Background: Structure probing data (2A3 and DMS) for a 177-nucleotide construct. DMS adducts were read by reverse transcription with MarathonRT. The RNA was probed in 150 mM KOAc, 10 mM MgCl2 and 150 mM bicine (pH 8.5) at 24 C. Values are in units of 0.01, from 0 to 300, in steps of 10. For 2A3 the reverse transcriptase was SuperScript II with manganese. It was measured as part of the RMDB library OK2TST.
[RMDB]
RNA sequence: GGGAACGACUCGAGUAGAGUCGAAAAAGCAACCUUGGAACCUGUAAGCCUUGUAUUGCCCCAUCUUCUUCCUCGGGUUCCGGACAACGACGGCUUUCCAUCCCGGGAUGACUACACGGAUUGGCUACCAUAUACGAGUGUUCGCACUCGUAUAUGGAAAAGAAACAACAACAACAAC
Reactivity to 2A3 in 0.01 (KOAc 150mM, MgCl2 10mM, bicine 150mM(pH8.5), 24C), signal-to-noise 4, nucleotides 027 to 126: a000g040c030a040a030c020c000u050u090g030g000a030a030c000c010u030g050u170a070a020g040c010c010u080u100g100u140a170u060u220g060c030c020c000c000a050u020c030u100u000c000u040u020c000c010u030c010g010g030g000u040u020c040c030g020g030a070c060a090a010c040g160a010c030g020g030c000u040u070u000c020c010a040u030c000c000c000g000g040g000a020u060g030a030c030u060a040c090a010c100g090g020a080u080u060g030g000c010u040a070
Reactivity to DMS in 0.01 (KOAc 150mM, MgCl2 10mM, bicine 150mM(pH8.5), 24C), signal-to-noise 5, nucleotides 027 to 126: a070g000c060a060a070c150c050u010u010g030g010a060a040c030c020u000g020u000a110a120g010c040c040u000u010g010u010a090u000u000g020c030c020c010c050a080u010c070u000u000c080u000u000c010c020u000c040g020g010g010u000u000c030c020g010g000a080c110a050a060c110g020a090c140g000g000c090u000u000u000c050c040a090u010c030c010c000g010g000g010a040u000g010a080c080u010a040c110a040c090g010g000a100u000u000g010g010c060u000a170
DMS (dimethyl sulfate) methylates the pairing face of unpaired adenines and cytosines. For DMS, 6,617 sequencing reads were counted.